[RMDB]
Notes: The data come from the RNA Mapping Database (RMDB), library OK2TRN. Chemical mapping of a 177-nucleotide RNA with DMS.

RNA sequence: GGGAACGACUCGAGUAGAGUCGAAAAGGUGAGCGAGAGAACUCUCGUUAAGGAACUCGGCAAAAUGACCCCGUAACUUCGGGAGAAGGGGUGCUGAUCUAACGAUCAGCCGCAGUGAAUAGGCCCAAAAAUACCCAGCAUUCGUGCUGGGUAUUUUAAAAGAAACAACAACAACAAC
Reactivity to DMS in 0.01 (KOAc 150mM, MgCl2 10mM, bicine 150mM(pH8.5), 24C), signal-to-noise 2, nucleotides 027 to 126: g000g040u010g010a100g010c030g000a060g010a050g000a140a090c210u000c020u010c000g030u000u010a120a110g010g020a220a040c030u010c030g000g000c030a100a070a090a060u010g020a070c040c010c000c030g000u000a100a150c030u000u000c130g020g020g020a090g040a130a130g000g000g020g020u000g010c000u000g010a010u000c010u000a080a200c300g010a000u000c010a030g020c020c040g020c170a030g010u010g000a100a120u000a110g010g020c000c020c040a000
Reactivities are rounded to 0.1 and cut off at 0 and 3.
Conditions: 150 mM KOAc, 10 mM MgCl2 and 150 mM bicine (pH 8.5), 24 C.